[RMDB]
RNA sequence: GGGAACGACUCGAGUAGAGUCGAAAACACCGUCCGCAGUUUGUUGUGAUGUGCUCCAAGCAAUCAUGAGUCUGAAGCACCACGAGAAGCUGCAGAUGGAGAAAAGAGAACGGCUUCGGCCGUUCUCCAAUGCCUUAUAGUUCGCUAUAAGGCAUUGAAAAGAAACAACAACAACAAC
Reactivity to DMS in 0.01 (KOAc 150mM, MgCl2 10mM, bicine 150mM(pH8.5), 24C), signal-to-noise 7, nucleotides 027 to 126: c050a220c010c010g010u000c010c020g020c010a010g000u000u000u000g010u010u000g010u000g000a170u010g010u000g010c000u000c020c010a030a060g010c020a120a130u020c210a140u010g010a170g000u010c030u000g000a020a020g000c000a010c010c010a010c010g000a020g000a020a010g010c010u000g020c010a010g010a020u000g000g000a130g000a080a070a100a110g000a010g000a010a010c010g000g000c000u000u010c230g030g010c000c000g000u000u000c000u000c000
Reactivity to 2A3 in 0.01 (KOAc 150mM, MgCl2 10mM, bicine 150mM(pH8.5), 24C), signal-to-noise 7, nucleotides 027 to 126: c020a010c000c000g010u000c000c000g000c000a010g000u010u010u010g200u050u010g000u040g040a230u150g020u000g010c000u020c030c020a110a040g000c020a070a160u220c130a190u300g080a030g110u050c020u040g000a010a000g000c000a000c000c000a000c000g000a000g010a000a000g000c000u000g000c000a000g000a000u010g010g010a060g090a060a140a010a020g010a000g000a000a000c010g000g000c020u060u090c230g090g000c000c000g000u000u000c000u000c000
The record gives the reactivity of an RNA of 177 nucleotides to DMS and 2A3. DMS adducts were read by reverse transcription with MarathonRT. The 2A3 profile rests on 14,956 reads. It was measured as part of the RMDB library RFMREP. Conditions: 150 mM KOAc, 10 mM MgCl2 and 150 mM bicine (pH 8.5), 24 C.